Record summary: This 177-nucleotide RNA was probed chemically with DMS and 2A3. Values cover nucleotides 27 to 126. The DMS profile rests on 13,350 reads. The RNA was probed in 150 mM KOAc, 10 mM MgCl2 and 150 mM bicine (pH 8.5) at 24 C.
RNA sequence: GGGAACGACUCGAGUAGAGUCGAAAAGAUAUGGAGCGUGAUAGACAUGCUCCCUUGUAUAUUCCUGGCAUCGGAAACGAUGUCAGCAGGAAUAUACAAGGGAGCAACAGCUAUACGCUCCUAAGUCCAGUUAAAACUAGUUCGCUAGUUUUAACUGAAAAGAAACAACAACAACAAC
Reactivity to DMS in 0.01 (KOAc 150mM, MgCl2 10mM, bicine 150mM(pH8.5), 24C), signal-to-noise 7, nucleotides 027 to 126: g010a100u000a300u000g010g000a000g010c000g010u000g020a030u000a000g010a070c100a240u000g010c000u000c000c000c000u000u000g000u000a010u000a010u000u000c000c000u000g010g000c000a000u000c010g000g000a140a170a260c000g000a020u000g010u000c230a100g030c300a050g000g000a020a000u000a000u000a010c010a000a000g000g000g000a010g010c000a010a010c190a180g010c010u000a000u000a010c010g010c000u000c000c000u000a010a060g000u010c050
Reactivity to 2A3 in 0.01 (KOAc 150mM, MgCl2 10mM, bicine 150mM(pH8.5), 24C), signal-to-noise 3, nucleotides 027 to 126: g070a020u130a050u300g010g000a000g020c010g020u140g300a060u020a020g070a120c060a070u060g000c000u010c000c010c000u000u000g000u000a010u000a000u000u010c010c000u010g010g000c000a000u000c000g020g060a080a060a090c010g010a010u010g020u030c010a000g000c020a020g030g010a010a000u000a010u000a000c000a000a000g000g000g000a000g000c000a000a000c000a000g000c000u000a000u000a020c000g000c010u010c000c000u000a020a000g000u010c010